[RMDB]
RNA sequence: GGGAACGACUCGAGUAGAGUCGAAAAUUCAGGUUGAAUUCCGUAUCUGUAUUUCUUAGAGUCCAUAACGAUGGGCGGAUGUUGCGCAUCGCUGGAUAGCACAAAGAACCAGUUGUCAUAACGCUUUCGAAUGAUCUGAACAUGCAACCAGGCAAUGACUGGCUCCAUUAUUCGUAAUGGAGCCAGUAAAAGAAACAACAACAACAAC
Reactivity to DMS in 0.01 (KOAc 150mM, MgCl2 10mM, bicine 150mM(pH8.5), 24C), signal-to-noise 1, nucleotides 027 to 156: u010u010c010a120g100g010u000u000g000a150a160u000u000c060c010g080u010a110u000c020u020g010u000a080u000u000u020c060u050u000a150g050a250g000u010c020c020a100u000a090a100c010g000a130u000g000g010g100c010g020g030a120u000g000u000u000g020c000g010c000a060u000c020g000c050u000g010g010a100u010a070g030c050a110c030a020a060a040g000a110a030c070c030a030g010u000u030g030u000c090a120u010a130a030c030g000c010u000u010u020c050g020a180a110u000g010a050u000c060u000g010a050a080c050a080u000g010c080a070a110c000c000a090g000g010c080a090a090u000g010
Reactivity to 2A3 in 0.01 (KOAc 150mM, MgCl2 10mM, bicine 150mM(pH8.5), 24C), signal-to-noise 2, nucleotides 027 to 156: u030u010c000a020g100g000u080u110g040a120a030u250u000c030c030g060u030a070u090c000u040g050u030a140u050u090u000c020u020u070a050g000a050g070u000c010c010a000u010a090a030c060g040a040u020g000g050g010c060g050g010a050u130g070u160u160g010c140g000c010a020u010c000g030c000u000g000g000a040u060a050g090c050a000c030a020a030a010g060a030a100c020c000a010g010u070u050g030u130c070a050u040a150a010c070g050c150u020u180u190c080g070a100a030u180g000a010u020c030u020g020a030a060c010a070u110g000c010a020a000c010c030a020g110g000c050a050a070u130g010